[RMDB]
Structure probing data (2A3) for a 207-nucleotide construct. The RNA was probed in 150 mM KOAc, 10 mM MgCl2 and 150 mM bicine (pH 8.5) at 24 C. For 2A3 the reverse transcriptase was SuperScript II with manganese.
RNA sequence: GGGAACGACUCGAGUAGAGUCGAAAAGGGGUCACCCGUUUGACGCGUUCGACAUGCGAUUCUACUGAAGCCUCCACGGUAGUUAUCGCAACAGCGAACGCCGAGGGUGACGGAGGCACCCAAAACCUGUGUCGCGACUUCGGUCGCGACACAGGAACCAUGUAUUAUCUUUCGAGAUAAUACAUGGAAAAGAAACAACAACAACAAC
Reactivity to 2A3 in 0.01 (KOAc 150mM, MgCl2 10mM, bicine 150mM(pH8.5), 24C), signal-to-noise 1, nucleotides 027 to 156: g150g010g070g030u000c000a000c000c020c000g020u190u100u140g000a000c010g000c010g000u000u000c020g110a200c190a300u300g000c000g000a000u000u010c000u000a000c000u020g030a100a010g010c000c000u000c000c000a040c000g000g010u000a010g010u080u060a000u040c000g000c050a130a060c110a060g020c040g000a000a010c010g000c000c000g000a020g000g000g000u000g000a000c000g000g000a000g000g000c000a020c010c000c000a020a090a030a100c000c010u000g000u010g000u000c000g000c030g000a000c020u090u100c300g150g000u000c000g000c000g000a000c010a000c000a000g020g010a000a010